An RNA of 207 nucleotides, treated with 2A3 and DMS and read out base by base.
The DMS profile rests on 1,250 reads.
2A3 adducts were read by reverse transcription with SuperScript II with manganese.
[RMDB]
RNA sequence: GGGAACGACUCGAGUAGAGUCGAAAAACACGUGGGGGAAAUGAGGGUUAGCAUAGGCAACCCCCGCCUACACACCAACUAUAGCAAACCCCGCCCCGUCACGGUGACGUAGUCUGUCUUGAGGAGAUGUAGACUUGUAGACACUGCAAAACCUCAGCAUAGAUGGCAACUUCGGUUGCCAUCUAUGAAAAGAAACAACAACAACAAC
Reactivity to 2A3 in 0.01 (KOAc 150mM, MgCl2 10mM, bicine 150mM(pH8.5), 24C), signal-to-noise 1, nucleotides 027 to 156: a000c090a030c050g010u070g000g000g000g000g050a080a220a160u190g010a260g020g060g000u010u020a030g030c020a030u000a020g030g020c040a070a280c000c000c030c030c000g010c000c030u140a030c050a000c000a040c080c090a100a110c090u120a020u150a100g030c010a050a000a020c000c000c000c000g000c000c000c000c030g080u060c010a000c020g080g020u060g040a000c080g070u040a040g020u000c070u030g020u000c020u080u070g000a020g020g000a090g000a070u010g010u030a000g050a070c000u000u020g030u060a030g060a040c080a010c130u010g000c000a000a000a000a170c000c020u060c010a000g010
Reactivity to DMS in 0.01 (KOAc 150mM, MgCl2 10mM, bicine 150mM(pH8.5), 24C), signal-to-noise 1, nucleotides 027 to 156: a170c050a000c080g020u000g020g080g000g000g030a040a050a130u000g000a140g030g000g040u000u000a130g010c050a140u000a050g040g000c090a100a200c030c050c040c010c000g000c090c020u000a010c080a060c080a240c050c020a040a130c050u000a070u000a190g020c000a090a070a050c080c000c000c000g020c020c000c000c000g010u000c000a140c070g030g020u000g000a090c090g000u000a090g000u000c050u030g000u010c050u010u010g000a050g000g010a120g000a300u000g000u000a070g030a080c090u000u000g050u000a060g000a130c130a300c080u050g000c000a030a020a180a270c000c000u000c000a090g000
The 2A3 profile rests on 709 reads.